RNA sequence: GGGAACGACUCGAGUAGAGUCGAAAAGAAAGAAAGAAAGAUGGUCACAUGAUGUUUGUAUCACCACCCAUCUGAAGCAGGCUGAAUGUCAGUCUGCAUGUGCAGAAAUGUGAUUCUGAUGGCUAAAGCCGAUUGUACUUUUCGAAGUACAAUCGGCAAAAGAAACAACAACAACAAC
Reactivity to 2A3 in 0.01 (KOAc 150mM, MgCl2 10mM, bicine 150mM(pH8.5), 24C), signal-to-noise 3, nucleotides 027 to 126: g090a000a100a010g100a010a070a010g170a000a150a000g080a070u040g040g000u050c040a040c020a080u030g020a020u010g180u080u170u200g130u210a050u060c040a010c030c010a010c000c070c010a030u000c030u050g040a050a010g000c000a000g040g000c000u000g040a190a140u300g220u270c030a010g000u000c020u000g030c010a010u050g050u090g040c020a020g040a010a040a030u080g040u050g060a010u090u000c000u010g060a090u040g090g000c070u100a170a000a040
Reactivity to DMS in 0.01 (KOAc 150mM, MgCl2 10mM, bicine 150mM(pH8.5), 24C), signal-to-noise 3, nucleotides 027 to 126: g010a110a060a120g010a080a070a080g000a060a070a040g010a040u000g020g000u000c070a070c270a100u030g000a070u000g010u020u000u020g000u000a040u000c040a040c120c120a140c260c010c010a020u020c020u000g000a100a080g000c000a010g000g000c000u000g000a190a100u080g030u030c000a010g000u010c000u000g000c010a000u020g020u000g020c010a020g000a050a040a090u020g010u020g000a090u020u010c030u000g000a050u000g000g000c070u030a030a090a140